[RMDB]
RNA sequence: GGGAACGACUCGAGUAGAGUCGAAAACUACUGGACAAGCCUUUGGCCAGAAUCCACUUUCAGGGGGUGGAGGGUAGCAUAGGGUAUCACCCAAUUGCCACUCCUUUGAUCCCGCGACACUACUAGACAGUAAUCUAAACUUCGGUUUAGAUUACUGAAAAGAAACAACAACAACAAC
Reactivity to DMS in 0.01 (KOAc 150mM, MgCl2 10mM, bicine 150mM(pH8.5), 24C), signal-to-noise 4, nucleotides 027 to 126: c120u010a120c040u010g000g010a030c060a110a090g020c170c170u000u000u000g010g030c000c030a050g000a130a160u010c040c050a060c120u010u000u010c090a060g020g010g020g000g030u000g000g000a060g020g010g010u000a030g000c010a020u000a120g000g000g020u000a130u020c250a060c000c000c010a070a140u000u000g000c000c000a020c010u000c000c010u000u000u000g000a060u000c000c010c000g020c090g010a060c130a080c090u000a040c030u000a070g010a300
Reactivity to 2A3 in 0.01 (KOAc 150mM, MgCl2 10mM, bicine 150mM(pH8.5), 24C), signal-to-noise 4, nucleotides 027 to 126: c020u120a070c020u010g010g000a020c020a050a110g140c030c110u140u070u080g020g010c010c000a000g030a020a080u040c040c010a060c060u070u190u170c130a090g000g020g030g000g010u010g020g020a040g010g030g000u020a020g000c000a020u030a030g070g010g000u110a130u200c090a070c020c000c000a030a060u120u010g000c000c010a020c020u130c010c000u040u060u070g030a010u020c000c000c000g030c010g040a040c040a020c100u240a040c000u030a030g050a090
Annotation:
Structure probing data (DMS and 2A3) for a 177-nucleotide construct. DMS adducts were read by reverse transcription with MarathonRT. The DMS profile rests on 3,406 reads. For 2A3, 4,351 sequencing reads were counted. 2A3 is a SHAPE reagent: it acylates the 2'-hydroxyl of flexible nucleotides of all four kinds. It was measured as part of the RMDB library RFMREP. The RNA was probed in 150 mM KOAc, 10 mM MgCl2 and 150 mM bicine (pH 8.5) at 24 C. Reactivities are given for positions 27 through 126.